[RMDB]
RNA sequence: GGGAACGACUCGAGUAGAGUCGAAAAGAUCUUGUAUUCGUACAAGAUCAAAAAACCUUUGUGCUCGAUCAGGCGAGGAUCACCUCACUCCCAUUGGGAGUAGGGUGGGAGCCUGGCGAGCACUCUGGUAAAAAAGCUUCCCUUUCGAGGGAAGCAAGUUCGAGUAAGAGUUCGCUCUUACUCGAACAAAAGAAACAACAACAACAAC
Reactivity to 2A3 in 0.01 (KOAc 150mM, MgCl2 10mM, bicine 150mM(pH8.5), 24C), signal-to-noise 2, nucleotides 027 to 156: g000a000u000c000u000u020g000u020a050u040u190c280g000u030a000c000a010a000g000a010u020c000a000a080a010a000a000a050c030c000u030u000u010g000u000g010c000u000c040g290a300u080c060a000g000g000c000g100a290g000g020a020u030c010a000c000c000u080c020a000c010u000c040c010c090a300u260u300g020g000g000a000g000u060a050g000g000g000u000g000g020g000a020g000c000c000u000g000g000c000g010a000g000c000a000c000u010c000u000g000g020u030a000a090a120a010a000a000g010c010u000u010c010c010c040u010u020u060c220g070a020g000g000g030a000a000g010c000a000a000
An RNA of 207 nucleotides, treated with 2A3 and read out base by base.
The data come from the RNA Mapping Database (RMDB), library RNAMAK.
The RNA was probed in 150 mM KOAc, 10 mM MgCl2 and 150 mM bicine (pH 8.5) at 24 C.
2A3 adducts were read by reverse transcription with SuperScript II with manganese.